[RMDB]
RNA sequence: GGGAACGACUCGAGUAGAGUCGAAAAAAGAUGAGAAAGUGCAGUAUUGACUGUCUUCAAACGCACCUGUCCUUGCUCAAGUGCUGGGAUUGUGUGCCAACGGCUAUGAUAGAUAUGAAUAGAGCACUCGAAAGUAUGGUUUCGACCAUACUUUCGAAAAAGAAACAACAACAACAAC
Reactivity to 2A3 in 0.01 (KOAc 150mM, MgCl2 10mM, bicine 150mM(pH8.5), 24C), signal-to-noise 7, nucleotides 027 to 126: a000a010g180a050u210g020a030g050a030a090a020g040u080g020c010a020g060u090a100u060u100g100a080c010u020g000u010c000u040u040c020a070a070a050c040g000c000a010c000c010u000g010u000c000c000u010u030g000c020u080c190a200a150g120u100g140c000u020g020g010g000a000u000u050g040u000g000u000g140c000c000a050a040c040g110g000c050u070a050u200g020a050u060a100g040a030u060a030u150g070a030a010u040a040g100a010g030c020a020c020
Reactivity to DMS in 0.01 (KOAc 150mM, MgCl2 10mM, bicine 150mM(pH8.5), 24C), signal-to-noise 5, nucleotides 027 to 126: a070a050g000a120u020g000a140g010a100a060a050g040u010g000c010a110g000u000a030u020u000g010a210c170u000g010u000c010u000u000c030a040a130a140c300g000c000a000c000c000u010g000u000c000c020u000u000g000c010u010c300a130a170g030u030g030c000u000g000g000g010a010u010u000g010u050g000u000g010c050c140a040a110c160g000g020c220u020a050u000g000a020u030a010g000a070u000a030u010g000a070a040u000a080g000a150g000c020a030c030